[RMDB]
RNA sequence: GGGAACGACUCGAGUAGAGUCGAAAACCGGAGUAGUUCGCUACUCCGGAAAUAAAUUCAGCGGUAAUUGGACCGCAAAUAUUACCGCUGAUGCGGUCGAAAAAACUGCCAAGUUCGCUUGGCAGAAGCAUGUUUUAAGGUUCGCCUUAAAACAUGCAAAAGAAACAACAACAACAAC
Reactivity to DMS in 0.01 (KOAc 150mM, MgCl2 10mM, bicine 150mM(pH8.5), 24C), signal-to-noise 2, nucleotides 027 to 126: c000c000g000g000a010g020u000a000g010u000u010c260g000c010u000a010c000u000c000c000g000g010a010a010a030u000a080a060a130u010u000c000a030g000c020g030g000u000a020a040u000u010g010g020a140c140c200g040c130a020a060a050u030a020u000u000a020c000c000g000c000u000g000a020u000g010c180g000g020u000c070g000a000a090a040a070a060a160c000u000g000c000c000a000a020g000u010u040c230g030c000u000u000g000g000c010a000g000a070a040
Reactivity to 2A3 in 0.01 (KOAc 150mM, MgCl2 10mM, bicine 150mM(pH8.5), 24C), signal-to-noise 2, nucleotides 027 to 126: c010c000g000g010a000g000u020a000g000u010u150c250g010c110u010a000c010u000c000c000g020g000a010a000a000u030a010a050a040u060u010c000a010g010c000g000g000u020a020a020u100u110g120g070a130c100c040g010c070a020a010a000u050a000u000u010a000c000c000g040c010u010g010a000u050g010c040g030g050u160c060g000a120a000a060a000a080a180c030u010g020c010c000a020a010g000u020u070c140g070c140u000u000g000g030c010a000g000a010a000
An RNA of 177 nucleotides, treated with DMS and 2A3 and read out base by base.
Values are in units of 0.01, from 0 to 300, in steps of 10.
DMS adducts were read by reverse transcription with MarathonRT.
The 2A3 profile rests on 2,254 reads.
It was measured as part of the RMDB library M2PK50.